RNA sequence: GGGAACGACUCGAGUAGAGUCGAAAAAGAGUACGGCCGCAAGGUUUCCGGUUGUGGAUGGCAGCGUGUGUGUCCCCCCGUCGUCUAGUGCUGGUUCUAGGGCUGGGGCGUCAGCAUCCAGGUAAAACAGUAUAUGUCAAUUCGUUGACAUAUACUGAAAAGAAACAACAACAACAAC
Reactivity to DMS in 0.01 (KOAc 150mM, MgCl2 10mM, bicine 150mM(pH8.5), 24C), signal-to-noise 9, nucleotides 027 to 126: a070g000a110g010u010a070c090g000g010c020c030g020c110a070a080g010g010u000u000u000c040c020g010g000u000u000g020u000g010g000a060u000g000g010c040a080g000c060g010u000g010u010g010u010g000u000c010c010c010c020c010c030g010u000c050g010u000c030u000a060g010u000g010c050u000g010g000u010u000c030u000a070g010g000g010c030u000g010g000g000g010c050g010u010c070a070g010c030a060u000c020c030a060g000g010u010a040a060a080a150
Reactivity to 2A3 in 0.01 (KOAc 150mM, MgCl2 10mM, bicine 150mM(pH8.5), 24C), signal-to-noise 4, nucleotides 027 to 126: a000g090a000g030u060a040c040g030g010c020c010g060c060a030a050g060g020u030u070u060c030c000g050g040u080u070g100u070g060g020a070u050g070g030c040a030g010c070g020u080g000u040g030u030g080u100c010c010c010c000c010c010g040u050c010g030u000c040u030a030g020u020g080c040u040g050g030u070u020c020u020a020g000g040g010c010u010g010g000g010g040c020g020u040c020a000g000c000a010u010c030c000a020g040g050u120a040a060a010a040

Source information: The record gives the reactivity of an RNA of 177 nucleotides to DMS and 2A3. High 2A3 reactivity points to a flexible backbone, as in loops and unpaired stretches. The data come from the RNA Mapping Database (RMDB), library M2PK90. The RNA was probed in 150 mM KOAc, 10 mM MgCl2 and 150 mM bicine (pH 8.5) at 24 C. For 2A3, 7,866 sequencing reads were counted.